An RNA of 177 nucleotides, treated with DMS and 2A3 and read out base by base. The reactions ran in a buffer of 150 mM KOAc, 10 mM MgCl2 and 150 mM bicine (pH 8.5), at 24 C. For DMS the reverse transcriptase was MarathonRT. 2A3 adducts were read by reverse transcription with SuperScript II with manganese.
RNA sequence: GGGAACGACUCGAGUAGAGUCGAAAAACUCAAUCAAGAAGUGAUUCACCCACGUGUCGCACAUGCUAUCAUGGAAGCAAGCUCUGUGGGUAGGAGAAAGCAAAUUCAAGGGCUUGUUGACACAACGCCCUGUGAUUGGAUUCGUCCAAUCACAGGGAAAAGAAACAACAACAACAAC
Reactivity to DMS in 0.01 (KOAc 150mM, MgCl2 10mM, bicine 150mM(pH8.5), 24C), signal-to-noise 3, nucleotides 027 to 126: a040c040u010c050a060a170u010c160a120a130g020a110a070g010u000g000a120u000u010c140a080c000c000c000a030c100g020u000g010u020c040g010c110a100c060a050u010g010c200u000a120u010c040a030u010g000g030a270a030g000c000a040a080g000c010u000c040u010g020u020g030g000g020u010a030g000g000a120g010a060a040a090g010c230a040a060a110u000u000c030a070a060g000g000g000c010u000u000g020u000u000g030a060c130a030c010a080a040c180g000
Reactivity to 2A3 in 0.01 (KOAc 150mM, MgCl2 10mM, bicine 150mM(pH8.5), 24C), signal-to-noise 3, nucleotides 027 to 126: a010c040u030c050a070a130u130c070a080a080g080a120a000g150u030g020a060u100u060c030a050c010c000c010a040c080g040u030g030u050c040g020c050a060c010a100u020g030c020u180a110u300c040a090u070g030g040a050a030g020c000a020a000g030c010u030c030u110g240u090g110g010g010u020a020g040g090a040g090a090a100a020g070c060a080a100a100u050u040c020a030a030g020g020g000c010u020u040g040u030u140g030a010c010a000c000a050a090c060g030